[RMDB]
RNA sequence: GGGAACGACUCGAGUAGAGUCGAAAAGCUAUCAAAUUUUGAUGGUGAUGGGAACGGCGCUAGCAACAAACAUAUUUUAUGUACCUCACGUGUUUGACUUAAUCAUUUACUGGUUAAAGUCUGUUCACAUACGCUCGUCUUUCGAGACGAGCGUAUGAAAAGAAACAACAACAACAAC
Reactivity to 2A3 in 0.01 (KOAc 150mM, MgCl2 10mM, bicine 150mM(pH8.5), 24C), signal-to-noise 4, nucleotides 027 to 126: g000c010u020a010u080c030a020a180a300u270u260u100u010g050a030u040g000g030u050g020a080u070g030g040g010a070a030c030g020g010c030g020c080u060a010g050c000a000a040c020a020a180a000c020a060u090a120u080u220u180u070a100u110g010u100a100c000c000u060c030a080c100g010u050g060u110u110u180g010a000c000u000u010a000a000u000c030a050u220u100u210a110c240u070g010g010u000u040a090a030a020g000u000c010u000g040u040u020c020a010
Reactivity to DMS in 0.01 (KOAc 150mM, MgCl2 10mM, bicine 150mM(pH8.5), 24C), signal-to-noise 3, nucleotides 027 to 126: g010c020u010a030u010c030a020a050a220u060u020u010u010g000a010u040g000g010u020g030a110u050g020g010g020a130a090c040g020g000c030g040c030u020a050g030c090a070a060c120a090a040a040c030a000u000a050u020u030u000u010a030u000g030u010a100c020c010u000c060a100c150g010u000g010u020u000u010g000a060c070u000u000a010a000u000c010a010u030u000u010a050c230u000g000g010u000u000a020a030a050g000u000c010u000g000u040u000c050a160